Structure probing data (2A3) for a 207-nucleotide construct. Conditions: 150 mM KOAc, 10 mM MgCl2 and 150 mM bicine (pH 8.5), 24 C. Source: RMDB library OK3TST, as collected in RNAgym. For 2A3, 513 sequencing reads were counted.
RNA sequence: GGGAACGACUCGAGUAGAGUCGAAAAGAAAGGAAUAAAACGCGCACGACGUAAACAUGGAAAAUUGUCCUAUUCUAAGUUUGCAUCAGAAGCGUGAUCGCUACCAAAAUGAGUACGAAUUAAAACAAGACACAUUCUUUCGUUUGGGCAAAAUGAACGCAUACAGUGCGUUCGCGCACUGUAUGCGAAAAGAAACAACAACAACAAC
Reactivity to 2A3 in 0.01 (KOAc 150mM, MgCl2 10mM, bicine 150mM(pH8.5), 24C), signal-to-noise 1, nucleotides 027 to 156: g050a000a060a000g130g020a080a110u140a130a010a040a010c070g030c030g000c000a010c110g050a050c110g000u040a000a000a000c000a020u110g030g000a000a000a080a170u010u160g040u040c010c000u070a110u020u030c030u060a190a000g000u000u020u020g030c090a100u080c070a090g210a300a010g000c000g030u020g030a000u040c000g000c100u020a030c000c020a070a000a000a070u150g020a080g030u060a020c040g070a030a000u050u070a090a110a030a000c030a060a000g090a040c040a000c010a130u110u000c000u050u140u020c000g100u050u000u130g000g030g000c010a000a000a120a120u150g020a070a040